[RMDB]
RNA sequence: GGGAACGACUCGAGUAGAGUCGAAAACGCGAGGCUCGACGGCCCCCCGAUCCCGGCGGAAUACAUACUCGAGGCCAUGACGAGCUUGCUUUCGAUCCGCACGGCGUGGUUGCGCAUCCAGAACACCUCCAUAACUAGUUUUCGAACUAGUUAUGGAAAAAGAAACAACAACAACAAC
Reactivity to DMS in 0.01 (KOAc 150mM, MgCl2 10mM, bicine 150mM(pH8.5), 24C), signal-to-noise 9, nucleotides 027 to 126: c130g020c060g010a070g010g010c020u000c030g010a140c110g010g000c010c010c020c030c030c030g010a100u000c040c020c020g020g010c040g010g010a120a080u010a080c110a090u010a050c060u000c040g010a060g010g000c030c040a130u010g010a120c040g010a050g010c040u000u010g010c070u000u000u010c080g000a080u000c030c030g010c050a080c060g010g010c050g030u000g010g010u000u000g010c050g010c070a090u010c040c040a100g000a100a090c110a100c120c060
Reactivity to 2A3 in 0.01 (KOAc 150mM, MgCl2 10mM, bicine 150mM(pH8.5), 24C), signal-to-noise 3, nucleotides 027 to 126: c040g010c010g030a030g070g030c020u030c080g080a090c050g060g000c000c010c020c000c020c020g010a090u050c000c030c000g040g000c040g030g010a060a040u140a100c050a030u090a050c030u020c070g040a040g000g000c020c010a070u090g050a030c020g000a000g010c040u020u050g010c000u050u120u060c040g040a050u010c010c010g010c040a050c020g020g000c030g000u030g010g050u080u040g010c020g010c010a030u030c020c010a020g060a060a020c030a040c120c010
Chemical mapping of a 177-nucleotide RNA with DMS and 2A3.
The reactions ran in a buffer of 150 mM KOAc, 10 mM MgCl2 and 150 mM bicine (pH 8.5), at 24 C.